[RMDB]
RNA sequence: GGGAACGACUCGAGUAGAGUCGAAAAUCAAAUUACCUUCUGAUCCGCAGUUCGUUCGUUAUGCACAUGAUUUAUGUGUGAAAAGUUCUGCAUCUGAAUCAUUUCGUUCUUCAGAACGAUGCCUGAAGGUAAAAUGCACGUUCGCGUGCAUUUUACCAAAAGAAACAACAACAACAAC
Reactivity to 2A3 in 0.01 (KOAc 150mM, MgCl2 10mM, bicine 150mM(pH8.5), 24C), signal-to-noise 3, nucleotides 027 to 126: u080c020a000a000a080u130u070a060c000c040u000u060c010u030g010a020u030c070c060g000c000a060g030u000u020c000g020u080u040c040g010u130u090a140u300g020c000a000c000a000u080g140a300u290u290u190a010u030g050u000g010u030g000a000a000a000a150g020u040u000c020u020g000c000a000u020c030u030g030a020a010u070c070a100u070u090u030c010g050u000u000c020u100u080c000a080g000a020a000c020g000a000u030g020c010c010u010g050a060a020
Reactivity to DMS in 0.01 (KOAc 150mM, MgCl2 10mM, bicine 150mM(pH8.5), 24C), signal-to-noise 2, nucleotides 027 to 126: u010c220a040a150a170u000u010a050c020c010u000u030c000u000g000a090u000c080c180g010c020a000g010u000u010c010g030u000u020c040g020u040u030a150u050g000c000a000c000a000u000g010a120u000u050u030a040u000g000u000g040u000g000a050a030a020a130g000u000u000c000u000g060c000a080u000c100u030g020a060a070u020c060a050u000u000u020c020g000u000u000c000u010u070c140a140g000a000a010c000g000a050u020g000c130c120u010g000a010a080
Chemical mapping of a 177-nucleotide RNA with 2A3 and DMS. The data come from the RNA Mapping Database (RMDB), library OK1LIB. For DMS the reverse transcriptase was MarathonRT. For 2A3 the reverse transcriptase was SuperScript II with manganese.